Structure probing data (2A3 and DMS) for a 177-nucleotide construct.
For 2A3 the reverse transcriptase was SuperScript II with manganese.
For DMS, 3,333 sequencing reads were counted.
Conditions: 150 mM KOAc, 10 mM MgCl2 and 150 mM bicine (pH 8.5), 24 C.
[RMDB]
RNA sequence: GGGAACGACUCGAGUAGAGUCGAAAACAACACGUCUUCGGACGUGUUGAAACGUGGUGGGUACGAUAACGCAUAUAAAGCCCAAGACAAGCAGGGCAAAAAAAACAACCAGCUUCGGCUGGUUGAACUAUACUCUAAGCUUCGGCUUAGAGUAUAGAAAAGAAACAACAACAACAAC
Reactivity to 2A3 in 0.01 (KOAc 150mM, MgCl2 10mM, bicine 150mM(pH8.5), 24C), signal-to-noise 2, nucleotides 027 to 126: c000a000a000c000a000c000g010u000c010u050u060c180g090g000a000c000g000u000g010u000u020g020a010a000a000c080g030u060g020g120u070g030g010g020u040a020c040g020a080u080a200a070c070g050c190a000u240a010u050a180a140a000g010c000c010c010a030a030g090a060c030a050a020g020c060a110g010g000g000c000a040a010a040a000a000a020a020a000c000a000a000c000c010a010g010c000u030u050c150g120g000c010u000g000g020u010u000g010a000a000
Reactivity to DMS in 0.01 (KOAc 150mM, MgCl2 10mM, bicine 150mM(pH8.5), 24C), signal-to-noise 3, nucleotides 027 to 126: c010a010a010c000a000c000g010u000c000u000u010c230g000g000a010c000g000u000g000u000u010g010a030a080a160c100g020u020g010g010u010g020g010g020u000a070c130g010a070u010a040a070c100g020c090a100u020a100u000a050a080a130g030c010c010c000a070a080g010a220c140a050a080g010c160a050g000g000g030c050a010a000a000a060a030a040a060a160c000a010a030c000c000a020g000c010u000u010c160g040g020c000u000g000g000u000u000g000a010a080